[RMDB]
RNA sequence: GGGAACGACUCGAGUAGAGUCGAAAAGAGCGAUUAGACAAAGGGGUAGAGCUACAUAUUAGAUAGCUGUAUUAUCGUUCAAGUUACAUCAAAACAUCUUCAAUAUUUAUUACUUACUUUCCUUUCUGCCAGAGUACGGUAUUCGUACCGUACUCAAGAUAGGUGAUCGCUUCGGCGAUCACCUAUCAAAAGAAACAACAACAACAAC
Reactivity to 2A3 in 0.01 (KOAc 150mM, MgCl2 10mM, bicine 150mM(pH8.5), 24C), signal-to-noise 1, nucleotides 027 to 156: g010a000g020c000g020a020u030u030a100g080a060c110a060a060a040g000g000g000g000u020a000g030a000g100c000u000a040c030a010u200a070u190u130a180g290a300u020a010g030c000u000g000u080a020u000u000a010u020c010g020u000u050c020a000a000g020u060u070a090c050a110u170c060a130a060a040a120c020a120u050c140u220u060c050a110a090u040a200u210u300u010a160u080u080a080c030u080u010a090c020u070u130u040c000c010u080u130u070c080u120g130c020c080a030g000a000g000u000a000c000g000g010u010a020u050u060c050g010u000a020c000c000g000u000a000c000u000c000a000a000

Notes
This 207-nucleotide RNA was probed chemically with 2A3. Values are in units of 0.01, from 0 to 300, in steps of 10. For 2A3 the reverse transcriptase was SuperScript II with manganese. The RNA was probed in 150 mM KOAc, 10 mM MgCl2 and 150 mM bicine (pH 8.5) at 24 C. For 2A3, 402 sequencing reads were counted.